Notes:
Chemical mapping of a 177-nucleotide RNA with 2A3 and DMS. For 2A3, 2,532 sequencing reads were counted. Source: RMDB library OK2TRN, as collected in RNAgym. Conditions: 150 mM KOAc, 10 mM MgCl2 and 150 mM bicine (pH 8.5), 24 C. Values cover nucleotides 27 to 126. For DMS the reverse transcriptase was MarathonRT.

RNA sequence: GGGAACGACUCGAGUAGAGUCGAAAACAACGUCACCUCACGCUCUUCCAUCAUUCACGAGACUCAGCACGAGGAGGCUCUGACUAAGAUCCAGCAUCUGGAAGAUACUUCGCGAUUCCAGAGGAAACUUAAACGCCAUUUUCGAAUGGCGUUUAAGAAAAGAAACAACAACAACAAC
Reactivity to 2A3 in 0.01 (KOAc 150mM, MgCl2 10mM, bicine 150mM(pH8.5), 24C), signal-to-noise 2, nucleotides 027 to 126: c040a020a020c000g060u050c030a030c050c000u000c000a040c060g000c010u010c010u090u030c040c020a040u050c010a050u070u170c060a030c160g050a040g030a050c020u000c030a020g100c030a060c080g020a070g100g000a010g030g000c020u020c030u030g050a080c030u080a100a030g000a080u050c040c010a030g060c030a100u020c010u020g020g010a020a010g040a050u120a140c050u090u170c150g060c050g110a080u040u000c000c000a000g000a020g060g000a060a050a000
Reactivity to DMS in 0.01 (KOAc 150mM, MgCl2 10mM, bicine 150mM(pH8.5), 24C), signal-to-noise 3, nucleotides 027 to 126: c100a070a110c150g010u010c020a100c020c010u000c050a120c050g010c030u000c030u000u000c020c020a060u010c080a060u020u000c070a080c130g010a140g000a050c040u000c010a090g000c060a090c050g000a080g000g000a090g030g010c030u000c020u010g000a040c140u000a060a110g010a130u000c030c030a100g000c050a140u000c000u000g000g020a010a010g000a090u000a100c090u000u000c090g030c030g000a140u000u000c020c000a000g000a050g020g000a060a090a160